Background:
An RNA of 207 nucleotides, treated with 2A3 and read out base by base.

RNA sequence: GGGAACGACUCGAGUAGAGUCGAAAAGAUUAAUGUCGAGGUUGAGAUGUCAUGGCUGUUGACAUUUCCAAAUGAUGAUAUAUACCGUCAGACAUAUCAUCAAGCUUUUUUGAUUAGUCCGAAUUUUCGCCUGCAUGUCAUGUCAGUCUUGGAAUCACCUUGCAUCUUGGUUCGCCAAGAUGCAAGGAAAAGAAACAACAACAACAAC
Reactivity to 2A3 in 0.01 (KOAc 150mM, MgCl2 10mM, bicine 150mM(pH8.5), 24C), signal-to-noise 1, nucleotides 027 to 156: g050a020u260u190a090a070u170g080u120c040g040a040g050g000u060u140g040a070g030a050u050g010u000c000a020u020g120g060c010u050g030u180u190g020a030c040a060u090u110u000c080c050a130a030a020u010g000a000u010g000a010u000a000u010a000u000a100c040c130g150u180c070a010g020a110c030a040u000a000u010c000a000u000c000a050a050g040c040u120u070u100u110u110u220g120a060u150u150a030g060u000c020c000g120a080a080u230u100u000u110c140g000c010c000u030g010c020a030u010g000u040c010a000u050g080u100c000a000g000u000c000u040u020g080g040a040a040u180c010a100